[RMDB]
RNA sequence: GGGAACGACUCGAGUAGAGUCGAAAAAUACUUCUCAGGAUGGCGCGUUGCAGUCCAACAAGAUCCAGGGACUGUACAGAAUUUUCCUAUACCUCGAGUCGGGUUUGGAAUCUAGGGUUGACUCGCUAAAACUUUACGUGGUUCGCCACGUAAAGAACUAAGGAGUCAUGUUCGCAUGACUCCUUAGAAAAGAAACAACAACAACAAC
Reactivity to DMS in 0.01 (KOAc 150mM, MgCl2 10mM, bicine 150mM(pH8.5), 24C), signal-to-noise 1, nucleotides 027 to 156: a070u000a080c070u000u000c040u000c010a160g000g030a070u000g000g030c080g020c050g050u010u010g020c050a040g020u000c050c010a100a180c090a100a180g010a100u010c030c020a150g000g000g010a040c010u000g030u000a120c080a160g000a100a080u000u010u010u010c020c000u010a170u000a040c080c010u010c020g010a040g000u000c010g030g010g040u000u000u000g030g010a070a070u000c050u000a120g010g020g020u020u000g000a070c050u000c030g020c070u010a030a070a150a120c000u000u000u000a010c000g030u000g010g020u000u010c300g020c000c000a050c000g000u000a000a000a000g010a020a110
Reactivity to 2A3 in 0.01 (KOAc 150mM, MgCl2 10mM, bicine 150mM(pH8.5), 24C), signal-to-noise 2, nucleotides 027 to 156: a010u110a070c060u050u010c050u020c020a010g040g010a070u060g040g010c040g000c080g170u130u040g010c010a020g000u000c020c010a030a030c070a080a180g040a110u070c060c060a020g060g010g000a000c000u010g000u000a010c000a020g110a160a100u060u010u050u040c000c000u020a020u070a150c030c020u010c030g000a000g050u030c010g000g000g000u050u060u020g000g040a050a050u060c090u070a070g010g040g060u060u080g040a060c020u020c020g030c020u080a060a070a010a050c010u000u000u000a000c000g000u000g000g050u000u040c140g030c080c000a000c000g000u000a000a000a000g000a000a000